[RMDB]
RNA sequence: GGGAACGACUCGAGUAGAGUCGAAAACUACACCAAAACAAUGUCUCAUUUCGAGCCAGGCAGGAAAGCCGAGUCUUACGAUCGUGCAAGACUCGCUGACAGGGGCAUACCUAAUGAGUUUGGAAAAGCACCCCACUUCAUUCGUGAAGUGGGGUGCAAAAGAAACAACAACAACAAC
Reactivity to 2A3 in 0.01 (KOAc 150mM, MgCl2 10mM, bicine 150mM(pH8.5), 24C), signal-to-noise 1, nucleotides 027 to 126: c060u010a060c070a000c070c000a000a000a020a060c050a030a260u160g130u000c050u070c100a080u000u050u040c010g000a000g190c130c000a080g060g000c000a010g000g140a220a020a000g030c030c000g040a000g000u010c040u020u000a140c060g200a300u290c070g050u010g120c000a030a000g020a000c000u000c070g010c000u040g000a000c000a040g000g000g000g000c000a180u300a270c000c000u040a090a000u000g100a000g080u000u000u000g070g000a090a170a000a000